This 207-nucleotide RNA was probed chemically with 2A3 and DMS. For DMS the reverse transcriptase was MarathonRT.
[RMDB]
RNA sequence: GGGAACGACUCGAGUAGAGUCGAAAACAAAGUCCUGGGUCCUCAUCCUGACAUUAUGGCCACCUGGCCAUGGGACCUGGAGCCAGUCACCACUGCUCUCUGAAUGCAGGUUCUCCAUUUCUAUAAUGGGCAGUGAGGAUCAGAUGAAGCAUUGGGACAAAAUUAUCAGUUUCGACUGAUAAUUUUGAAAAGAAACAACAACAACAAC
Reactivity to 2A3 in 0.01 (KOAc 150mM, MgCl2 10mM, bicine 150mM(pH8.5), 24C), signal-to-noise 6, nucleotides 027 to 156: c040a010a120a020g080u030c000c020u060g040g010g010u010c010c010u050c030a110u130c030c060u060g060a070c050a100u120u130a030u070g000g000c010c020a220c160c270u220g020g000c000c000a010u010g000g000g000a010c000c000u010g010g010a000g050c070c040a010g050u070c040a020c210c010a020c020u000g000c000u010c000u000c040u110g080a070a040u140g080c040a020g030g000u060u020c050u000c010c000a010u030u100u000c130u160a150u070a170a040u030g030g080g010c020a030g020u030g080a010g030g010a010u010c010a010g050a120u150g060a040a010g030c060a050u050u120g010g010g010a020
Reactivity to DMS in 0.01 (KOAc 150mM, MgCl2 10mM, bicine 150mM(pH8.5), 24C), signal-to-noise 4, nucleotides 027 to 156: c050a100a160a130g000u000c020c010u000g030g020g000u010c010c010u000c050a050u000c050c080u010g010a150c070a100u000u000a060u000g010g000c010c000a200c170c190u000g050g050c010c000a050u000g000g020g010a030c010c010u000g010g010a050g000c050c010a070g010u000c020a090c010c030a040c060u000g000c030u000c040u010c040u000g000a030a090u000g020c030a060g010g000u010u000c000u010c010c010a050u000u000u010c140u020a130u000a040a040u010g000g000g030c040a060g010u000g010a070g010g000a080u000c010a060g000a090u000g010a060a070g010c020a060u000u010g000g000g020a190
For 2A3, 5,438 sequencing reads were counted.